[RMDB]
The data come from the RNA Mapping Database (RMDB), library OK2TRN. Chemical mapping of a 177-nucleotide RNA with 2A3 and DMS.
RNA sequence: GGGAACGACUCGAGUAGAGUCGAAAAGACAGUCAGAGACUGACACAGUCUCUCACUCUCACUGUGUCUCAGAGUCAGUCUCUCAGUGUCUCAGUCAGUCACAGAGACACUGUGACAGUCAGUGACACGCUAAUAGCGACUUCGGUCGCUAUUAGCGAAAAGAAACAACAACAACAAC
Reactivity to 2A3 in 0.01 (KOAc 150mM, MgCl2 10mM, bicine 150mM(pH8.5), 24C), signal-to-noise 2, nucleotides 027 to 126: g040a010c040a010g000u080c020a010g010a000g000a030c040u070g150a120c010a020c020a190g020u020c000u000c010u020c040a010c000u070c010u040c040a090c060u120g050u040g050u090c000u020c080a080g030a030g080u050c030a030g050u010c040u030c000u010c040a020g010u000g000u000c010u000c000a030g080u040c060a010g030u080c030a000c010a080g010a030g000a010c010a040c060u000g000u000g030a020c020a010g070u080c010a030g020u020g020a010c010a010
Reactivity to DMS in 0.01 (KOAc 150mM, MgCl2 10mM, bicine 150mM(pH8.5), 24C), signal-to-noise 2, nucleotides 027 to 126: g020a020c070a120g000u000c150a040g000a040g010a020c030u000g020a170c160a150c110a060g000u000c020u010c030u000c140a020c040u000c160u000c080a100c110u030g000u000g000u020c000u000c030a100g000a060g000u000c060a070g010u000c030u030c020u010c040a040g020u000g000u000c000u000c010a070g010u010c120a100g010u000c080a020c020a080g000a090g010a040c100a050c000u000g010u010g000a010c050a050g020u000c050a030g000u010g000a010c080a150
DMS adducts were read by reverse transcription with MarathonRT.
For DMS, 1,698 sequencing reads were counted.
For 2A3 the reverse transcriptase was SuperScript II with manganese.